[RMDB]
An RNA of 177 nucleotides, treated with DMS and 2A3 and read out base by base. Source: RMDB library TTRDEL, as collected in RNAgym. For 2A3 the reverse transcriptase was SuperScript II with manganese. Conditions: 150 mM KOAc, 10 mM MgCl2 and 150 mM bicine (pH 8.5), 24 C.
RNA sequence: GGGAACGACUCGAGUAGAGUCGAAAAGAUAUGGAAAGCAUCGAUCUACUACGCGCAGAUAUCGGAAACGAUGUAGCGUAAGUAGGGAGCUUUCCUAAGUCAAAACUCUAUAGUUCGCUAUAGAGAAGGAUCUCAAUUAGUUCGCUAAUUGAGAUCCAAAAGAAACAACAACAACAAC
Reactivity to DMS in 0.01 (KOAc 150mM, MgCl2 10mM, bicine 150mM(pH8.5), 24C), signal-to-noise 2, nucleotides 027 to 126: g010a050u000a300u000g000g000a000a020a010g010c000a280u030c060g000a070u020c010u000a010c000u010a010c050g010c000g010c200a150g000a050u010a050u000c000g000g000a130a060a190c000g010a000u000g020u010a100g020c000g000u000a030a040g010u000a010g000g000g010a040g000c000u000u010u000c000c000u020a010a040g000u000c010a060a120a090a120c000u000c000u000a000u000a020g000u000u020c200g050c010u000a000u000a000g000a030g020a070a060
Reactivity to 2A3 in 0.01 (KOAc 150mM, MgCl2 10mM, bicine 150mM(pH8.5), 24C), signal-to-noise 3, nucleotides 027 to 126: g010a010u040a040u110g000g020a020a010a000g010c010a240u300c040g120a090u030c040u020a000c010u010a010c050g000c010g080c120a050g070a300u120a030u080c020g000g050a070a050a030c010g010a010u020g020u090a050g000c030g000u030a090a170g000u010a000g030g000g020a010g000c000u000u000u030c000c000u000a100a000g050u010c020a030a040a060a170c010u010c000u000a000u000a000g040u020u040c280g010c110u010a010u000a010g000a010g010a010a020